[RMDB]
RNA sequence: GGGAACGACUCGAGUAGAGUCGAAAAAGUUGGCUCUUUCGAGAGCCAACUAAAAAAGCGUACUACGAGGAUCGAACUACCUCUGGAUCCCAAAUAGGAUCCCGAGGCGAUCUACCCACCGUAUCGCAAAAAAUCUAGGCCUUUCGAGGCCUAGAAAACUACUGGACGAAUUCGUUCGUCCAGUAGUAAAAGAAACAACAACAACAAC
Reactivity to 2A3 in 0.01 (KOAc 150mM, MgCl2 10mM, bicine 150mM(pH8.5), 24C), signal-to-noise 2, nucleotides 027 to 156: a000g040u010u000g000g040c000u020c030u030u080u170c220g050a000g000a000g020c020c000a000a000c010u010a000a020a000a000a000a000g030c020g000u060a040c030u000a010c080g010a050g040g000a020u000c000g040a080a050c110u160a110c200c000u000c040u000g000g010a000u000c050c020c060a250a300a250u220a140g000g000a000u010c000c020c060g000a000g000g000c000g010a000u000c000u100a210c000c010c010a020c020c000g000u010a040u160c020g000c000a030a100a050a000a000a000u030c000u020a010g010g000c010c010u060u090u110c190g070a030g010g010c010c000u010a000g000a000a000a000